[RMDB]
Structure probing data (2A3) for a 207-nucleotide construct. Conditions: 150 mM KOAc, 10 mM MgCl2 and 150 mM bicine (pH 8.5), 24 C.
RNA sequence: GGGAACGACUCGAGUAGAGUCGAAAAGGGGUCAAGAGUAGGUUCCGAGGAUCAUGAUGACAUGAGCUGAAGCCUCCACGGCUCAACAGCAUCAUGGGAGGAACCGCAGAUACUUGACGGAGGCACCCAAAGGUGACAGCUUUCGAGCUGUCACCAAGGGGGGCUAUAUGUUCGCAUAUAGCCCCCCAAAAGAAACAACAACAACAAC
Reactivity to 2A3 in 0.01 (KOAc 150mM, MgCl2 10mM, bicine 150mM(pH8.5), 24C), signal-to-noise 1, nucleotides 027 to 156: g000g010g100g000u000c030a040a000g010a080g140u260a190g040g000u000u000c000c010g020a240g010g000a000u020c000a000u030g000a000u010g000a040c050a200u170g000a020g040c000u000g000a040a000g010c000c010u000c000c010a010c000g010g000c000u030c040a120a190c070a100g200c010a000u000c000a000u000g010g010g000a010g020g000a000a000c000c000g040c010a000g000a000u200a210c000u000u020g020a030c040g000g010a010g010g000c020a030c000c010c000a010a120a170g000g010u060g000a000c010a000g070c000u070u180u250c280g060a030g020c000u020g040u000c000a000c000c000a000a000